The record gives the reactivity of an RNA of 207 nucleotides to 2A3. Source: RMDB library M2RFPK, as collected in RNAgym. Reactivities are given for positions 27 through 156. Conditions: 150 mM KOAc, 10 mM MgCl2 and 150 mM bicine (pH 8.5), 24 C.

[RMDB]
RNA sequence: GGGAACGACUCGAGUAGAGUCGAAAAGUCCCCAGUAUGACGUUAAACUGCUGACUCAUACAUACUGACACCGGUUGCGCAACAGGCUGUGUGGGACAAUAGAAUAACAAGGCUGUCAAUUUGAGCUAAAACUCCUCGGGGUUCGCCCCGAGGAGAAGGAGUGGCAUUAGUUCGCUAAUGCCACUCCAAAAGAAACAACAACAACAAC
Reactivity to 2A3 in 0.01 (KOAc 150mM, MgCl2 10mM, bicine 150mM(pH8.5), 24C), signal-to-noise 1, nucleotides 027 to 156: g030u000c000c040c000c010a000g000u020a060u090g000a000c020g000u000u070a020a040a060c020u020g030c030u040g020a090c060u030c010a050u020a050c010a000u040a030c020u080g070a040c060a110c120c000g160g000u090u210g040c060g000c020a010a120c030a140g030g000c060u050g000u050g020u030g040g010g000a000c000a040a010u100a040g090a060a080u120a080a000c020a000a070g050g040c000u040g040u030c030a040a040u140u060u260g050a020g010c030u060a060a070a110a200c050u030c000c000u000c000g000g000g000g000u020u000c090g060c020c000c000c000g000a010g000g000a000g000a000a010